[RMDB]
RNA sequence: GGGAACGACUCGAGUAGAGUCGAAAAUCAUGGAUAAUGCUAUUAAUGUUGGUGGUACAGGAUUACAGUAUGCCGCCAUUACUGCACCUUAUGUAGUUCUCACUGGCUUAGGUGAGUCCUUUAAGAACCAAGUAUUAAGCUUCGGCUUAAUACUUGGAAAAGAAACAACAACAACAAC
Reactivity to DMS in 0.01 (KOAc 150mM, MgCl2 10mM, bicine 150mM(pH8.5), 24C), signal-to-noise 3, nucleotides 027 to 126: u010c030a060u010g010g010a110u000a090a150u000g010c020u010a060u010u000a040a030u000g000u000u010g030g020u000g040g070u000a040c040a060g020g010a170u020u010a120c150a130g050u010a040u000g030c020c020g000c090c010a020u000u000a010c110u000g010c020a040c070c050u010u000a060u010g010u000a040g010u000u000c000u010c000a030c040u000g030g050c190u000u020a130g000g010u000g000a030g010u000c030c020u020u000u010a090a110g000a090a220
Reactivity to 2A3 in 0.01 (KOAc 150mM, MgCl2 10mM, bicine 150mM(pH8.5), 24C), signal-to-noise 4, nucleotides 027 to 126: u050c010a020u050g010g000a040u030a180a040u170g040c040u070a020u110u030a100a020u080g020u040u020g040g020u070g060g000u030a010c000a050g100g090a220u150u160a060c030a040g080u060a010u040g020c000c010g000c010c000a000u010u030a010c020u010g010c010a020c020c000u050u070a030u100g080u040a040g030u070u040c030u010c000a010c020u030g090g120c090u140u120a050g000g050u030g010a020g010u010c010c000u110u140u100a150a050g010a040a030

Notes: The data come from the RNA Mapping Database (RMDB), library 15KREP. Chemical mapping of a 177-nucleotide RNA with DMS and 2A3. High 2A3 reactivity points to a flexible backbone, as in loops and unpaired stretches. The RNA was probed in 150 mM KOAc, 10 mM MgCl2 and 150 mM bicine (pH 8.5) at 24 C. For DMS, 2,689 sequencing reads were counted.